[RMDB]
Structure probing data (2A3 and DMS) for a 170-nucleotide construct. It was measured as part of the RMDB library 15KLIB. For DMS the reverse transcriptase was MarathonRT. Conditions: 150 mM KOAc, 10 mM MgCl2 and 150 mM bicine (pH 8.5), 24 C.
RNA sequence: GGGAACGACUCGAGUAGAGUCGAAAAAUUUAGUGUGUUAGCAUGCUAUAAUGGUCGUCCGACUGGUACAUUCACUGUUGUAAUGCGCCCUAACUACACAAUUAAGGGUUCCUUUCUGUGUGGUUCUAACGAACACACUUCGGUGUGUUCAAAAGAAACAACAACAACAAC
Reactivity to 2A3 in 0.01 (KOAc 150mM, MgCl2 10mM, bicine 150mM(pH8.5), 24C), signal-to-noise 5, nucleotides 027 to 129: a000u090u080u060a030g020u040g000u000g020u080u050a040g090c000a020u120g000c000u030a060u060a170a080u090g030g000u030c030g040u010c050c000g040a050c090u120g000g070u100a010c010a040u050u080c050a000c130u050g030u090u040g020u030a020a030u040g000c000g020c010c030c000u030a010a000c030u030a000c010a000c000a030a150u120u090a060a020g090g050g020u130u160c000c000u030u060u030c070u000g030u000g000u010g030g000u030u000c000u070a080a060c110
Reactivity to DMS in 0.01 (KOAc 150mM, MgCl2 10mM, bicine 150mM(pH8.5), 24C), signal-to-noise 4, nucleotides 027 to 129: a050u030u020u030a040g040u030g010u030g000u010u010a000g040c000a000u050g040c040u020a000u000a140a000u000g000g000u030c060g030u060c080c040g000a130c060u050g040g000u010a070c050a070u000u050c070a080c100u020g050u000u000g000u000a000a000u010g010c060g030c020c050c000u030a080a060c020u020a020c000a020c030a010a110u020u000a040a050g030g020g070u020u040c020c010u010u040u020c010u010g010u030g010u030g010g000u000u000c080u030a070a220c280